[RMDB]
RNA sequence: GGGAACGACUCGAGUAGAGUCGAAAAGGUCCUCCAGAGCGCGCGCCACCAUCGCCAAAGCCAGGUCGGCCUCCGCUCGGCUGCCGCCUCUCUACUACCCAUUACAAUGCUCGCCCAAAGCGCGAUGCUUAGUGGGCCGAUUCGUCGGCCCACUAAGAAAAGAAACAACAACAACAAC
Reactivity to 2A3 in 0.01 (KOAc 150mM, MgCl2 10mM, bicine 150mM(pH8.5), 24C), signal-to-noise 2, nucleotides 027 to 126: g090g010u060c000c000u070c020c010a010g010a070g040c050g010c050g030c010g000c000c000a030c040c010a020u110c050g070c060c070a140a080a020g000c000c000a010g010g090u040c030g000g000c000c020u020c030c000g020c070u050c010g050g000c010u100g010c020c030g030c000c000u010c000u030c010u010a050c010u010a000c020c000c030a060u060u000a070c020a010a000u170g000c000u000c000g030c010c020c050a010a110a090g030c050g000c010g020a050u130g020
Reactivity to DMS in 0.01 (KOAc 150mM, MgCl2 10mM, bicine 150mM(pH8.5), 24C), signal-to-noise 1, nucleotides 027 to 126: g010g000u000c030c000u050c010c000a060g000a030g000c090g130c000g000c100g010c050c030a110c090c000a130u000c050g020c000c000a010a300a140g090c040c040a150g000g000u070c010g060g000c000c080u040c120c000g000c010u040c050g050g030c000u000g000c000c200g000c000c020u000c000u010c040u000a150c000u000a180c000c000c000a040u000u000a030c090a200a010u080g000c000u000c010g030c000c000c060a050a140a090g050c050g000c200g010a000u010g000